[RMDB]
RNA sequence: GGGAACGACUCGAGUAGAGUCGAAAAAUACACACGUUGCCAUCUGCAACCGGAAACCUUGCGGCCGUGUCUGACUGGGUAAUGAGCACCGUACCUGUCGCGCCGCCCAGAAGAAGGCGAGGGAGAACCAUCCCUCGACUUUCGAGUCGAGGGAUGGAAAAGAAACAACAACAACAAC
Reactivity to DMS in 0.01 (KOAc 150mM, MgCl2 10mM, bicine 150mM(pH8.5), 24C), signal-to-noise 2, nucleotides 027 to 126: a100u040a110c080a040c050a060c140g000u010u010g050c010c130a090u010c040u020g000c020a050a100c010c060g000g030a040a120a030c120c000u010u010g030c060g000g050c020c080g020u000g000u030c020u000g000a090c050u020g000g010g040u010a070a060u020g010a100g050c080a080c120c040g000u000a060c040c020u000g000u000c000g010c080g000c070c040g000c020c010c070a070g000a210a060g000a060a070g010g040c020g000a100g000g010g020a120g000a110a220
Reactivity to 2A3 in 0.01 (KOAc 150mM, MgCl2 10mM, bicine 150mM(pH8.5), 24C), signal-to-noise 4, nucleotides 027 to 126: a000u160a010c040a000c040a010c060g050u050u020g040c050c020a140u060c040u090g030c030a100a070c030c010g040g020a090a070a020c010c000u050u190g150c050g020g000c010c080g050u080g070u090c030u090g080a230c030u030g000g030g110u100a090a110u120g110a010g040c010a020c070c020g040u140a120c000c040u040g050u110c030g000c000g000c030c000g040c010c030c000a060g030a080a030g030a020a000g040g010c010g010a070g010g050g000a110g000a010a020
Chemical mapping of a 177-nucleotide RNA with DMS and 2A3. Source: RMDB library OK1LIB, as collected in RNAgym. Conditions: 150 mM KOAc, 10 mM MgCl2 and 150 mM bicine (pH 8.5), 24 C. DMS (dimethyl sulfate) methylates the pairing face of unpaired adenines and cytosines. The 2A3 profile rests on 2,498 reads.